[RMDB]
RNA sequence: GGGAACGACUCGAGUAGAGUCGAAAACAGCAAAAAGGAACCGAUUCCCACCAAGUUCGGAAAGAGAUACCGGGCGAGGCGCUGAAGAAAGAAUCUCGCUUCGGACACCCCAAGGACUCGACUGAAGAAUGCACGCCAUCGUUCGCGAUGGCGUGAACAUACAAGGAAUCUUCGGAUUCCUUGUAUGAAAAGAAACAACAACAACAAC
Reactivity to 2A3 in 0.01 (KOAc 150mM, MgCl2 10mM, bicine 150mM(pH8.5), 24C), signal-to-noise 2, nucleotides 027 to 156: c020a020g040c040a030a040a090a000a090g120g040a090a030c060c070g060a070u050u030c020c010c010a030c040c030a110a040g040u080u010c030g020g020a130a120a020g050a020g000a000u040a160c000c000g000g000g010c010g000a000g000g020c030g000c120u090g040a060a020g090a080a260a000g050a090a100u030c010u000c010g000c000u080u140c030g050g000a040c020a090c030c000c000c030a030a070g020g010a030c000u000c030g050a030c040u090g030a040a000g050a060a030u100g040c000a000c010g000c000c000a020u000c000g020u110u140c190g000c040g090a020u000g000g000c000g000u000g000a000a000
Reactivity to DMS in 0.01 (KOAc 150mM, MgCl2 10mM, bicine 150mM(pH8.5), 24C), signal-to-noise 1, nucleotides 027 to 156: c040a140g010c020a030a070a070a120a150g000g000a070a110c040c010g000a180u000u000c020c000c040a110c070c070a090a160g000u000u010c030g020g000a070a110a200g020a140g020a120u000a130c040c000g000g000g010c080g030a090g010g070c110g010c030u000g010a060a160g000a120a100a150g010a090a100u000c030u000c020g000c030u000u020c020g040g020a270c000a050c030c040c030c010a100a300g040g000a040c010u040c040g010a130c010u010g000a090a040g000a150a040u000g000c030a040c030g010c000c010a040u000c000g030u050u030c270g020c010g000a000u010g010g000c030g020u000g030a020a100